[RMDB]
RNA sequence: GGGAACGACUCGAGUAGAGUCGAAAAUGGUUGACCUGCCCGGCGGAUCGUUCCGCAUGGGCUCGACGCGCUUCUACCCCGAAGAAGCGCCGAUUCAUACCGUGACCGUGCGCGCCUUUGCGGUAGACUCUGCGAGUGGAUUCGUCCACUCGCAGAGAAAAGAAACAACAACAACAAC
Reactivity to DMS in 0.01 (KOAc 150mM, MgCl2 10mM, bicine 150mM(pH8.5), 24C), signal-to-noise 2, nucleotides 027 to 126: u000g000g020u020u010g010a240c060c070u000g020c010c000c010g010g000c020g010g000a040u010c300g010u000u010c000c000g040c000a050u010g000g020g000c000u010c060g000a130c270g010c080g040c050u000u000c000u000a070c060c000c000c000g030a120a010g000a030a060g000c010g050c010c040g000a050u000u000c070a130u010a060c110c040g000u000g020a030c080c010g060u000g000c050g050c040g000c140c010u000u000u000g030c130g000g010u000a080g000a130
Reactivity to 2A3 in 0.01 (KOAc 150mM, MgCl2 10mM, bicine 150mM(pH8.5), 24C), signal-to-noise 1, nucleotides 027 to 126: u060g040g020u060u110g060a070c050c030u020g000c020c010c000g030g020c020g020g010a090u260c100g260u300u000c020c010g010c080a080u180g010g010g050c060u000c000g000a010c000g020c000g060c020u040u090c010u100a100c020c020c000c010g020a040a010g000a020a000g000c010g000c000c000g000a030u120u000c040a030u090a240c010c080g010u050g060a050c000c000g050u160g030c000g010c000g010c040c010u120u040u020g020c000g000g040u040a020g050a030
Structure probing data (DMS and 2A3) for a 177-nucleotide construct. Reactivities are rounded to 0.1 and cut off at 0 and 3. The RNA was probed in 150 mM KOAc, 10 mM MgCl2 and 150 mM bicine (pH 8.5) at 24 C.